[RMDB]
RNA sequence: GGGAACGACUCGAGUAGAGUCGAAAAGGUAUCCACUUCGGUGGAUACCAAAGGCGAUCCCAGCAUCAGGGAACAACAACAAUAGAAGCAUCCCUAACGCCAAAAUUCCGGAUUUCGAUCCGGAAAAGAACUAUUGUUAGUUCGCUAACAAUAGUUCAAAAGAAACAACAACAACAAC
Reactivity to 2A3 in 0.01 (KOAc 150mM, MgCl2 10mM, bicine 150mM(pH8.5), 24C), signal-to-noise 6, nucleotides 027 to 126: g010g000u000a000u000c000c000a000c000u040u060c160g110g000u010g000g000a000u000a000c000c000a000a020a010g010g000c010g010a080u010c000c000c000a010g090c030a100u190c090a010g000g000g050a030a060c020a020a010c010a020a030c030a090a150u120a230g150a190a020g060c050a040u010c020c000c000u010a070a030c010g000c010c000a050a110a010a040u050u010c010c000g000g010a010u040u040u130c150g060a010u000c000c000g000g010a010a000a000a010
Reactivity to DMS in 0.01 (KOAc 150mM, MgCl2 10mM, bicine 150mM(pH8.5), 24C), signal-to-noise 5, nucleotides 027 to 126: g020g010u000a000u000c000c010a000c000u000u020c220g040g030u020g000g010a010u000a000c000c000a010a050a070g020g010c040g020a150u000c010c010c000a190g000c130a080u010c160a030g010g010g000a050a070c040a070a070c060a070a080c110a080a110u000a070g010a060a130g020c160a080u000c000c000c000u010a110a100c050g020c010c040a110a080a110a130u010u000c000c000g000g000a010u000u000u010c200g010a010u000c000c010g010g000a000a010a060a100
The record gives the reactivity of an RNA of 177 nucleotides to 2A3 and DMS. The 2A3 profile rests on 15,661 reads. Reactivities are rounded to 0.1 and cut off at 0 and 3. For 2A3 the reverse transcriptase was SuperScript II with manganese.